[RMDB]
RNA sequence: GGGAACGACUCGAGUAGAGUCGAAAAAGGAAGGCGAAGCCAGGGGAAACUCUGGUGGAGGCUUGUCGCAAUGCUGACGUGCAAAUCGCUUGUCUAACUUGAGUAUAGGGGCGAAAGACUAAUCGAAAUCUUGCCCUUGGUUCGCCAAGGGCAAGAUAAAAGAAACAACAACAACAAC
Reactivity to 2A3 in 0.01 (KOAc 150mM, MgCl2 10mM, bicine 150mM(pH8.5), 24C), signal-to-noise 1, nucleotides 027 to 126: a000g140g000a050a020g010g140c010g000a010a000g020c000c000a020g000g000g000g000a080a030a030c000u050c000u050g010g020u040g000g000a010g000g060c000u000u080g070u020c000g000c160a000a020u010g020c020u050g080a000c090g160u180g000c060a000a000a090u000c000g030c000u030u120g160u020c060u000a000a120c000u050u270g140a000g030u160a030u090a300g080g090g010g000c000g000a000a060a070g000a020c090u150a000a160u110c090g050a170a000
Reactivity to DMS in 0.01 (KOAc 150mM, MgCl2 10mM, bicine 150mM(pH8.5), 24C), signal-to-noise 1, nucleotides 027 to 126: a010g000g000a100a000g010g000c020g000a300a240g000c000c000a040g020g000g000g000a180a100a300c000u000c010u030g030g000u010g000g000a300g000g000c050u010u000g000u000c010g000c100a040a220u000g050c090u000g050a030c020g020u010g010c000a010a040a000u010c070g000c050u000u040g000u000c100u000a000a190c080u040u000g060a200g000u000a030u010a070g000g000g000g000c060g000a030a140a000g000a030c120u010a190a000u000c120g000a130a110